[RMDB]
RNA sequence: GGGAACGACUCGAGUAGAGUCGAAAAAUACUUUUGGCAUACAAAACUGGCUAUCAGGGUCUUGGAAAAUAACGCCACUUAAUGGGUCAACGAUUAGUUCAUCAUAUUUCAUAGGUAAUUCAAUUAACGUGUGCGUAUAAUUCGUUAUACGCACACGAAAAGAAACAACAACAACAAC
Reactivity to DMS in 0.01 (KOAc 150mM, MgCl2 10mM, bicine 150mM(pH8.5), 24C), signal-to-noise 1, nucleotides 027 to 126: a110u030a050c050u010u000u000u000g010g000c060a080u000a100c080a090a030a060a170c110u010g000g000c040u000a040u000c040a050g010g000g030u000c030u010u020g000g000a090a070a060a100u050a100a120c110g000c040c040a030c120u000u000a080a040u010g020g000g030u000c020a060a020c120g000a020u010u010a090g000u010u000c060a030u040c040a070u000a050u000u000u000c020a090u010a090g020g000u010a010a080u010u010c060a030a070u000u020a050a230
Reactivity to 2A3 in 0.01 (KOAc 150mM, MgCl2 10mM, bicine 150mM(pH8.5), 24C), signal-to-noise 1, nucleotides 027 to 126: a000u130a010c030u080u080u040u150g030g010c020a030u090a150c040a180a000a130a120c020u100g120g000c010u030a060u210c060a070g050g080g000u010c050u080u080g000g050a000a190a000a000u080a060a020c040g020c000c040a020c020u080u100a150a060u080g050g000g000u020c000a020a020c030g040a080u120u020a050g050u070u000c000a040u010c020a030u110a030u150u070u090c050a070u000a080g080g040u100a100a080u020u170c060a040a110u110u080a110a020
Annotation:
An RNA of 177 nucleotides, treated with DMS and 2A3 and read out base by base. The RNA was probed in 150 mM KOAc, 10 mM MgCl2 and 150 mM bicine (pH 8.5) at 24 C. It was measured as part of the RMDB library OK2TST.